[RMDB]
An RNA of 177 nucleotides, treated with 2A3 and DMS and read out base by base. Values cover nucleotides 27 to 126. The reactions ran in a buffer of 150 mM KOAc, 10 mM MgCl2 and 150 mM bicine (pH 8.5), at 24 C. Source: RMDB library TTRDEL, as collected in RNAgym.

RNA sequence: GGGAACGACUCGAGUAGAGUCGAAAAGAUAUGGAAUGUUGCUUUUGACGGCUUAAGGGUCGGAAACGACCUUAAGGCCGAUAAGCACCAUUCCUAAGUCAAAGGAAGAACGUUCGCGUUCUUCCAACUAAGUACAAAGCUUCGGCUUUGUACUUAGAAAAGAAACAACAACAACAAC
Reactivity to 2A3 in 0.01 (KOAc 150mM, MgCl2 10mM, bicine 150mM(pH8.5), 24C), signal-to-noise 4, nucleotides 027 to 126: g000a000u030a020u110g020g000a000a010u010g000u010u000g020c020u090u150u170u300g300a240c130g000g000c000u030u020a020a050g100g050g030u040c010g000g000a020a020a000c010g000a060c060c000u000u000a030a020g050g000c010c010g010a010u020a010a000g020c000a000c000c010a010u000u000c000c000u000a060a000g010u000c070a110a100a100g000g010a000a000g010a010a010c010g030u080u130c300g040c000g140u000u010c000u010u000c000c000a000a000
Reactivity to DMS in 0.01 (KOAc 150mM, MgCl2 10mM, bicine 150mM(pH8.5), 24C), signal-to-noise 4, nucleotides 027 to 126: g000a020u000a300u010g000g000a010a000u000g000u000u000g000c000u000u000u010u000g030a180c150g020g010c000u000u000a100a070g000g000g030u000c000g010g010a040a050a110c000g000a010c000c000u000u000a070a090g010g020c000c000g020a040u000a010a010g010c000a020c040c000a000u010u000c000c000u000a020a090g000u000c020a070a110a180g010g000a020a010g010a020a010c000g010u010u010c270g030c010g030u000u000c000u000u000c000c010a020a060